[RMDB]
RNA sequence: GGGAACGACUCGAGUAGAGUCGAAAAGGCGGUGGAGAUGGAGAGGGGCUCCAAAGGCAGAAGAGGCAGGUGGAGGCGCCUGGGAGGAGCCUCCUCCACACACACCUGUGUGCACCUGCAAACUCCAGAUCUGUGUUGAAUUCGUUCAACACAGAUCAAAAGAAACAACAACAACAAC
Reactivity to DMS in 0.01 (KOAc 150mM, MgCl2 10mM, bicine 150mM(pH8.5), 24C), signal-to-noise 2, nucleotides 027 to 126: g000g000c020g000g030u010g000g000a140g010a200u000g010g000a000g010a140g040g000g010g000c000u020c000c020a060a100a130g010g000c040a100g010a100a100g000a120g000g010c040a040g000g030u030g000g010a130g010g000c150g020c010c010u000g000g020g020a160g010g000a030g000c010c000u000c000c010u000c000c000a030c010a030c020a030c010a150c220c150u020g000u000g000u000g000c050a030c020c010u010g020c030a060a030a100c090u000c020c060a250
Reactivity to 2A3 in 0.01 (KOAc 150mM, MgCl2 10mM, bicine 150mM(pH8.5), 24C), signal-to-noise 3, nucleotides 027 to 126: g060g000c060g000g010u030g040g090a220g030a220u090g040g010a000g060a120g020g020g000g000c000u010c010c040a070a040a000g040g000c060a030g040a250a030g050a150g070g070c080a010g030g070u130g030g130a170g050g070c080g000c010c010u050g040g050g030a140g010g020a000g000c000c000u000c000c010u010c000c010a010c000a000c000a000c010a030c010c050u040g000u000g000u020g000c020a030c030c040u050g000c010a100a060a040c010u010c050c010a010
This 177-nucleotide RNA was probed chemically with DMS and 2A3. High DMS reactivity at an A or C suggests that its Watson-Crick edge is free. The RNA was probed in 150 mM KOAc, 10 mM MgCl2 and 150 mM bicine (pH 8.5) at 24 C. It was measured as part of the RMDB library OK2TST.